[RMDB]
RNA sequence: GGGAACGACUCGAGUAGAGUCGAAAAGAUAUGGACUUGAACUACACGAGUCCCAAACGAAGAACUCGGAAACGAGGGAGUUUGGAGUCGUGCAAGUCCUAAGUCAAAAGACUGGUUCGCCAGUCAACUGGGUUAUAGAGUUCGCUCUAUAACCCAGAAAAGAAACAACAACAACAAC
Reactivity to 2A3 in 0.01 (KOAc 150mM, MgCl2 10mM, bicine 150mM(pH8.5), 24C), signal-to-noise 2, nucleotides 027 to 126: g070a000u060a050u150g000g000a000c000u020u000g010a110a070c060u200a040c200a010c000g040a010g220u190c020c000c020a000a010a010c010g160a300a130g000a100a040c000u000c000g040g010a060a030a030c010g000a000g010g020g000a090g030u000u000u000g040g020a050g170u000c000g000u000g000c030a010a000g000u000c000c000u000a040a020g070u020c020a100a090a090a030g030a000c000u000g010g050u060u110c200g050c110c010a000g020u010c010a000a000
Reactivity to DMS in 0.01 (KOAc 150mM, MgCl2 10mM, bicine 150mM(pH8.5), 24C), signal-to-noise 2, nucleotides 027 to 126: g000a130u000a300u000g000g000a010c000u000u000g000a060a050c050u000a300c010a020c000g000a040g020u000c080c000c030a000a000a040c010g010a170a170g030a120a250c000u000c000g000g000a100a080a140c000g010a010g000g030g000a040g000u000u000u000g000g010a140g010u000c000g000u000g020c010a000a030g000u000c000c000u000a040a060g010u010c010a100a070a130a130g030a010c000u000g000g020u000u000c190g010c000c000a020g000u000c030a020a130